[RMDB]
RNA sequence: GGGAACGACUCGAGUAGAGUCGAAAAGUGGCUGGUGCUGGCUAAGAUCUUCUACUACGCCGUGGUCCCGGCCUUCGCGCGCGGCGCGUGCUGCAGCAUGGGCGUGCACUACGACCGCGUGUACCCGCUGGUGCAGUCGGUCGUGGUGCCGGACCUGCCAGUAUUUUCAGUUCGCUGAAAAUACUGGAAAAGAAACAACAACAACAAC
Reactivity to DMS in 0.01 (KOAc 150mM, MgCl2 10mM, bicine 150mM(pH8.5), 24C), signal-to-noise 1, nucleotides 027 to 156: g040u010g010g010c020u000g000g040u000g010c010u000g020g020c060u000a100a090g010a170u010c080u000u010c040u000a120c000u000a070c030g000c010c000g030u010g000g010u000c010c030c020g030g000c020c080u000u000c060g000c010g010c090g050c020g000g030c040g040c120g020u000g010c030u020g030c050a150g000c010a110u000g010g000g030c020g000u010g000c000a020c010u000a030c010g000a050c020c010g010c070g040u010g050u000a010c010c000c200g010c180u020g060g050u000g030c000a090g010u000c020g000g010u000c000g040u000g010g020u000g010c000c050g010g010a100c010c010u000g030
Reactivity to 2A3 in 0.01 (KOAc 150mM, MgCl2 10mM, bicine 150mM(pH8.5), 24C), signal-to-noise 4, nucleotides 027 to 156: g130u060g010g010c020u040g020g040u070g020c030u070g070g000c030u100a100a090g020a120u060c070u150u060c030u220a090c010u040a050c130g000c030c010g050u080g040g000u060c030c010c000g020g000c020c020u090u100c060g010c010g010c000g000c050g150g060c030g000c060g110u120g020c030u070g010c020a050g030c020a090u130g010g000g030c030g030u170g000c010a000c010u000a000c000g000a000c020c010g010c020g040u020g000u010a010c010c000c060g200c300u300g000g000u000g000c000a030g040u090c010g030g000u000c000g000u000g000g000u010g000c000c000g000g040a040c000c000u010g030